The data come from the RNA Mapping Database (RMDB), library OK3TST. Chemical mapping of a 207-nucleotide RNA with 2A3.

[RMDB]
RNA sequence: GGGAACGACUCGAGUAGAGUCGAAAACACCUUGCUGUCGAGCAGGUGGGCUUCGGAUUCGGAGUCACCCUGAAUCCAGUACUUUACCUACCCCCAGGGACAGGGGUCCUGGUCAGCAGGGAGCAGCAGGCACCCAAGCUGCCUGUCCCUCCUCUGAGCCUGCGUAUAGUUUCGACUAUACGCAGGCAAAAGAAACAACAACAACAAC
Reactivity to 2A3 in 0.01 (KOAc 150mM, MgCl2 10mM, bicine 150mM(pH8.5), 24C), signal-to-noise 1, nucleotides 027 to 156: c000a050c010c040u000u050g000c010u010g070u210c070g040a050g180c010a010g000g020u060g010g000g020c000u000u000c000g300g000a300u190u300c000g050g050a020g070u100c010a070c000c000c000u000g070a040a030u060c000c010a050g000u010a070c020u040u110u150a190c000c000u050a020c040c000c000c070c020a000g070g020g030a090c070a030g040g000g010g020u050c000c020u000g000g000u040c000a000g000c020a040g030g000g000a100g040c010a000g020c010a020g050g000c020a050c030c090c000a070a060g050c060u010g020c010c000u030g000u020c000c030c010u040c000c020u000c030u040g000a000